[RMDB]
RNA sequence: GGGAACGACUCGAGUAGAGUCGAAAAAGCAAUCGAGUACGAGUCGAGCAGCUACGAGGGAUGCAUCUUUUGUGAUGCGAUGAAAAAGUACCCGGACGCGAUUAACCUGAAUCAUGCCUACCUGACAUGCCUAGCUAUAGUUCGCUAUAGCUAGGCAAAAAGAAACAACAACAACAAC
Reactivity to 2A3 in 0.01 (KOAc 150mM, MgCl2 10mM, bicine 150mM(pH8.5), 24C), signal-to-noise 3, nucleotides 027 to 126: a000g090c040a030a110u040c000g020a030g080u010a050c080g030a000g040u010c000g030a020g080c060a000g060c020u040a040c050g030a160g040g010g000a000u180g030c010a020u000c020u070u270u170u180g250u160g070a010u010g070c000g060a030u080g010a040a060a040a000a010g080u150a100c000c000c000g040g020a020c080g020c030g030a000u030u150a020a030c000c050u070g050a040a040u080c030a010u030g020c000c010u050a080c020c000u000g050a030c040a080
Reactivity to DMS in 0.01 (KOAc 150mM, MgCl2 10mM, bicine 150mM(pH8.5), 24C), signal-to-noise 2, nucleotides 027 to 126: a050g010c070a070a040u060c060g050a080g010u010a030c090g000a070g030u010c040g010a070g000c050a130g000c040u010a070c070g000a070g000g000g000a090u000g010c010a000u010c000u030u020u030u010g000u020g030a030u000g000c000g000a140u020g000a030a030a050a090a060g000u000a130c030c040c080g040g000a130c140g010c000g000a040u010u020a080a080c020c010u010g000a090a040u010c060a060u010g020c000c030u000a090c020c030u000g000a130c130a140